[RMDB]
Chemical mapping of a 177-nucleotide RNA with DMS. Source: RMDB library TTRDEL, as collected in RNAgym.
RNA sequence: GGGAACGACUCGAGUAGAGUCGAAAAGAUAUGGACUACCCACCAGUAGAACUACCUCGAAAGUGUCGGAAACGACACUGAGAGGCUACUGAGGUCCUAAGUCAAAACACUAACUUCGGUUAGUGAACAAAGUCGUAGUCUUCGGACUACGACUUUGAAAAGAAACAACAACAACAAC
Reactivity to DMS in 0.01 (KOAc 150mM, MgCl2 10mM, bicine 150mM(pH8.5), 24C), signal-to-noise 1, nucleotides 027 to 126: g000a100u000a170u020g000g010a020c000u040a040c000c000c000a300c070c000a000g000u000a060g010a040a040c030u010a300c000c000u020c000g000a080a070a020g000u000g000u020c010g000g000a110a080a150c000g000a000c000a000c000u000g000a300g000a010g000g000c000u000a020c000u000g010a200g010g000u000c000c000u000a010a050g000u020c100a110a050a100a270c010a000c000u000a000a010c000u000u020c270g000g000u000u010a000g000u000g000a140a190
The reactions ran in a buffer of 150 mM KOAc, 10 mM MgCl2 and 150 mM bicine (pH 8.5), at 24 C.